Source: RMDB library RNAMAK, as collected in RNAgym. Chemical mapping of a 207-nucleotide RNA with 2A3 and DMS.
RNA sequence: GGGAACGACUCGAGUAGAGUCGAAAAUCCUAAGUCGUCUUGGACCUACUCAGUACUACUGCAUGGAGCGCUAUCGGAAACGAUAGCGCUUUGAAGUGUGGUAGGAACCGUAGCUAGACGAUAUGGAAAAACCUGCUGUUCUUCGGAACAGCAGGAACUAUAUGUUUAUGUUCGCAUAAACAUAUAGAAAAGAAACAACAACAACAAC
Reactivity to 2A3 in 0.01 (KOAc 150mM, MgCl2 10mM, bicine 150mM(pH8.5), 24C), signal-to-noise 4, nucleotides 027 to 156: u010c010c000u030a100a030g030u000c010g000u000c020u080u170g080g160a210c030c000u000a000c000u010c000a000g000u000a000c000u000a000c000u000g000c000a010u020g010g020a010g000c000g000c000u000a000u000c000g020g030a080a040a030c010g000a000u000a000g000c000g000c020u020u010u030g040a040a020g000u000g000u010g010g000u000a000g010g000a000a000c000c000g010u000a000g000c010u000a000g000a000c010g000a000u020a080u070g040g050a040a050a030a030a060c000c000u000g000c010u000g000u000u000c000u020u050c230g120g000a010a000c010a000g000c000a000g000g000a000a000
Reactivity to DMS in 0.01 (KOAc 150mM, MgCl2 10mM, bicine 150mM(pH8.5), 24C), signal-to-noise 4, nucleotides 027 to 156: u000c010c000u000a060a270g010u000c020g020u000c010u000u010g070g010a130c300c010u000a020c010u000c030a120g040u000a270c000u000a020c000u000g010c000a020u010g000g010a040g000c000g010c000u000a030u000c000g020g020a230a140a300c020g020a010u000a000g000c020g000c000u000u000u000g000a100a220g010u000g030u000g020g010u000a000g000g000a110a070c170c300g020u000a030g020c010u000a020g010a030c010g000a040u010a150u010g000g000a030a100a090a110a160c020c010u000g000c000u000g020u000u000c000u000u000c300g040g000a020a020c000a000g010c010a000g010g010a010a040
The DMS profile rests on 9,543 reads.